[RMDB]
Chemical mapping of a 207-nucleotide RNA with 2A3.
For 2A3 the reverse transcriptase was SuperScript II with manganese.
Conditions: 150 mM KOAc, 10 mM MgCl2 and 150 mM bicine (pH 8.5), 24 C.
Reactivities are given for positions 27 through 156.
RNA sequence: GGGAACGACUCGAGUAGAGUCGAAAAGGGGUCUUUCCGCAAGUGUCAAGUGAAGCUUGGAUUUAUACAGCUGAAGCCUCCACGGCUGUAUUGUCAGCUUCACGGGGACAUGAUGACCGGAAAGACGGAGGCACCCAAACGCCCGUUCGCGGGCGAACUGGUAGGUAAUGUUCGCAUUACCUACCAGAAAAGAAACAACAACAACAAC
Reactivity to 2A3 in 0.01 (KOAc 150mM, MgCl2 10mM, bicine 150mM(pH8.5), 24C), signal-to-noise 2, nucleotides 027 to 156: g070g000g000g020u030c030u000u000u000c020c000g000c020a300a300g000u000g020u020c090a120a150g000u000g010a000a000g000c010u160u250g140g010a040u130u300u060a050u030a020c000a000g000c000u030g050a160a020g020c010c000u000c000c000a020c010g010g000c000u000g020u000a000u000u020g010u020c020a010g000c000u000u000c000a000c020g010g020g030g020a030c030a010u060g050a100u090g000a020c000c040g010g010a010a000a000g000a000c020g010g000a010g000g020c010a010c000c000c010a050a300a080c020g000c000c040c010g010u040u000c180g000c000g100g000g020c000g020a060a020